[RMDB]
An RNA of 177 nucleotides, treated with DMS and 2A3 and read out base by base. 2A3 adducts were read by reverse transcription with SuperScript II with manganese. For 2A3, 4,760 sequencing reads were counted. High DMS reactivity at an A or C suggests that its Watson-Crick edge is free. Source: RMDB library M2PK90, as collected in RNAgym.

RNA sequence: GGGAACGACUCGAGUAGAGUCGAAAAGUUAUGGAAAACGUCUUAGCUACCACUACAACAACAAUGCUGGACGGUGAUGGUUCGACUUACUCGAAACCAUCACGUAGUGGUAGACGUUCCCAUUCAAUCUGAACACUUGAUUCGUCAAGUGUUCAGAAAAAGAAACAACAACAACAAC
Reactivity to DMS in 0.01 (KOAc 150mM, MgCl2 10mM, bicine 150mM(pH8.5), 24C), signal-to-noise 3, nucleotides 027 to 126: g000u010u000a110u010g020g010a140a080a080a020c010g000u000c040u000u000a100g000c020u000a010c000c010a010c000u000a020c010a100a060c140a050a100c160a120a080u000g020c110u000g010g000a020c030g000g080u000g000a000u000g000g000u000u000c000g000a030c290u010u000a090c220u000c000g000a020a030a030c000c000a000u000c000a020c010g000u000a010g020u000g000g010u000a000g000a050c000g000u010u000c010c000c020a130u000u010c110a070a190
Reactivity to 2A3 in 0.01 (KOAc 150mM, MgCl2 10mM, bicine 150mM(pH8.5), 24C), signal-to-noise 4, nucleotides 027 to 126: g020u050u050a090u230g090g030a120a070a020a020c010g030u000c030u130u210a050g030c010u010a000c000c010a000c000u010a010c000a090a000c000a040a010c030a130a220u200g100c090u100g100g030a020c020g030g000u000g000a000u000g000g010u000u010c010g000a040c090u150u230a090c050u090c010g030a050a030a030c000c000a000u000c000a000c000g010u010a000g000u000g010g000u000a000g010a000c000g000u000u020c000c020c000a010u080u090c000a010a090